Structure probing data (2A3 and DMS) for a 177-nucleotide construct.
Source: RMDB library OK1LIB, as collected in RNAgym.
The 2A3 profile rests on 635 reads.
Conditions: 150 mM KOAc, 10 mM MgCl2 and 150 mM bicine (pH 8.5), 24 C.
RNA sequence: GGGAACGACUCGAGUAGAGUCGAAAAGAACGCCAAGAGGCGAGACCGAGACCGAAAAUCACGCUAUCUCGGAAAAGUGGAAUAGCGUCAGGAGUCCACUUUCGGAAAAGCCGAAAGAACGGCAGAAAUCGAUUAGCCCAUUCGUGGGCUAAUCGAUAAAAGAAACAACAACAACAAC
Reactivity to 2A3 in 0.01 (KOAc 150mM, MgCl2 10mM, bicine 150mM(pH8.5), 24C), signal-to-noise 1, nucleotides 027 to 126: g040a090a000c010g000c040c010a040a060g060a250g140g100c000g010a090g060a000c000c000g010a010g020a030c000c010g000a140a000a000a030u120c000a000c040g020c000u040a000u040c000u040c050g090g010a080a150a150a150g270u240g050g040a020a100u020a060g000c000g000u000c000a000g000g000a000g030u010c000c040a000c030u000u000u000c020g020g000a000a060a170a000g170c000c000g000a010a000a010g010a040a070c040g000g070c000a040g210a070a160
Reactivity to DMS in 0.01 (KOAc 150mM, MgCl2 10mM, bicine 150mM(pH8.5), 24C), signal-to-noise 1, nucleotides 027 to 126: g000a090a000c010g010c000c000a080a080g000a290g010g000c000g000a110g000a300c060c000g000a180g050a200c120c110g040a070a080a040a260u000c060a120c050g070c000u000a020u000c000u000c070g020g000a040a000a040a080g030u050g000g000a010a000u070a000g000c000g010u010c130a220g000g000a020g050u000c060c000a000c060u000u050u000c070g010g000a170a030a050a270g030c000c000g000a000a050a030g000a050a030c190g000g020c090a170g000a000a190